Background: The record gives the reactivity of an RNA of 177 nucleotides to 2A3 and DMS.

[RMDB]
RNA sequence: GGGAACGACUCGAGUAGAGUCGAAAACAGCAUGCACGAUGGCAAAAGGUGCAUCGCCAAGACGUGGGCCGAUAGUUACUCCUCCCUGGUGAGCAACUAAACUGCCGUUGGCAGAGGCAGACAACUGCAUAGACGCAUGUUUCGACAUGCGUCUAUGAAAAGAAACAACAACAACAAC
Reactivity to 2A3 in 0.01 (KOAc 150mM, MgCl2 10mM, bicine 150mM(pH8.5), 24C), signal-to-noise 3, nucleotides 027 to 126: c020a000g050c010a030u030g010c010a010c090g080a100u090g110g010c090a060a020a030a120g120g000u030g000c000a070u010c050g000c020c010a030a040g050a050c110g040u120g000g050g010c030c010g040a060u070a050g040u080u060a060c020u020c010c000u000c020c000c000u010g000g030u100g040a000g000c020a010a010c000u040a060a090a050c020u010g000c000c010g140u080u100g050g000c000a000g010a070g050g050c000a000g010a020c020a080a040c010u080g000
Reactivity to DMS in 0.01 (KOAc 150mM, MgCl2 10mM, bicine 150mM(pH8.5), 24C), signal-to-noise 4, nucleotides 027 to 126: c110a170g000c060a040u000g000c010a030c030g010a100u000g010g010c140a050a060a110a040g000g010u000g000c010a010u000c140g010c020c070a070a090g000a070c130g020u000g010g030g000c050c030g010a140u000a040g020u010u000a080c060u010c020c030u010c060c030c030u000g000g000u000g010a060g020c050a030a050c030u000a020a070a150c050u000g010c010c010g020u010u000g000g000c040a060g020a150g020g010c040a030g010a080c110a040a080c080u010g010
It was measured as part of the RMDB library OK2TST. In probing experiments dimethyl sulfate is read out at A N1 and C N3, which are open when not base-paired. The RNA was probed in 150 mM KOAc, 10 mM MgCl2 and 150 mM bicine (pH 8.5) at 24 C.